Structure probing data (DMS and 2A3) for a 177-nucleotide construct. The DMS profile rests on 1,214 reads. The reactions ran in a buffer of 150 mM KOAc, 10 mM MgCl2 and 150 mM bicine (pH 8.5), at 24 C. For 2A3 the reverse transcriptase was SuperScript II with manganese.
[RMDB]
RNA sequence: GGGAACGACUCGAGUAGAGUCGAAAAAUACGCUAUCGCGCGCGCUAUUAUGCGCGCAUACGCGCGAUACGCGCGGCGAUAAUACGCUAUUAUCGCUAUCGCCGCAUAAUAGCGUAUGCGCGCGCGAGAGCUCCUCAAAGUUCGCUUUGAGGAGCUCAAAAGAAACAACAACAACAAC
Reactivity to DMS in 0.01 (KOAc 150mM, MgCl2 10mM, bicine 150mM(pH8.5), 24C), signal-to-noise 2, nucleotides 027 to 126: a070u030a110c050g020c030u000a060u000c030g020c020g030c000g020c000g040c060u000a060u000u000a050u000g010c000g020c160g070c030a000u000a080c130g000c020g000c020g010a110u000a070c140g010c010g010c030g030g010c010g010a000u000a040a030u000a060c300g020c220u000a020u000u000a000u000c040g000c000u000a070u000c140g050c060c040g010c010a030u020a010a010u000a020g010c020g000u010a050u030g040c010g000c000g020c300g030c050g000a090
Reactivity to 2A3 in 0.01 (KOAc 150mM, MgCl2 10mM, bicine 150mM(pH8.5), 24C), signal-to-noise 2, nucleotides 027 to 126: a000u180a030c030g000c020u070a050u210c030g000c000g020c000g000c000g000c030u000a000u040u010a020u040g000c000g070c020g000c000a000u000a020c000g020c000g000c010g100a160u110a300c060g010c000g000c040g000g020c010g010a010u020a010a000u030a040c100g020c210u050a020u060u020a020u040c000g000c020u030a060u240c110g020c020c000g020c000a010u030a060a010u010a010g000c000g000u030a060u090g000c000g000c000g000c010g000c010g020a070